[RMDB]
RNA sequence: GGGAACGACUCGAGUAGAGUCGAAAAGAAAGUUCAAGCAAGCUAGCCGGCAAACAAGCAAACUUGACCACCAAGGAUAAAAGAGAUCUUAUCCAAGGAUGCAAAAGAUAAUCUCACUUUUGACACCAAAACAGGGAGUAGUUCGCUACUCCCUGAACCUAUUAGGCGUCUUCGGACGCCUAAUAGGAAAAGAAACAACAACAACAAC
Reactivity to DMS in 0.01 (KOAc 150mM, MgCl2 10mM, bicine 150mM(pH8.5), 24C), signal-to-noise 2, nucleotides 027 to 156: g000a080a070a040g000u000u000c020a040a070g020c020a040a290g020c040u000a070g020c000c010g050g000c040a200a040a110c070a070a120g000c020a020a130a070c010u000u000g000a050c060c010a050c100c020a030a300g000g020a060u000a070a000a050a090g030a210g000a170u000c060u000u000a010u000c040c020a040a270g030g000a070u000g000c030a060a020a110a040g000a100u000a120a130u030c020u000c020a120c010u000u010u020u010g010a150c020a060c040c100a080a070a070a120c050a040g020g020g000a060g020u000a030g020u000u000c280g040c000u000a010c000u000c000c000c010u000g000a000a070
Reactivity to 2A3 in 0.01 (KOAc 150mM, MgCl2 10mM, bicine 150mM(pH8.5), 24C), signal-to-noise 2, nucleotides 027 to 156: g040a010a050a010g020u070u070c080a050a010g000c010a070a020g010c020u030a010g020c040c050g060g000c000a050a090a000c040a050a000g020c010a040a000a000c020u030u010g000a010c010c000a030c010c000a050a020g000g000a000u010a030a030a010a020g090a010g000a030u020c010u000u030a000u000c020c000a040a010g050g000a080u070g020c010a010a000a020a010g010a050u100a060a100u050c020u020c040a000c010u030u020u000u030g050a070c070a040c070c040a050a030a020a160c020a010g000g000g000a010g000u020a010g000u020u020c110g000c060u010a010c000u050c050c020c010u010g000a000a000
An RNA of 207 nucleotides, treated with DMS and 2A3 and read out base by base. The reactions ran in a buffer of 150 mM KOAc, 10 mM MgCl2 and 150 mM bicine (pH 8.5), at 24 C. The DMS profile rests on 1,912 reads.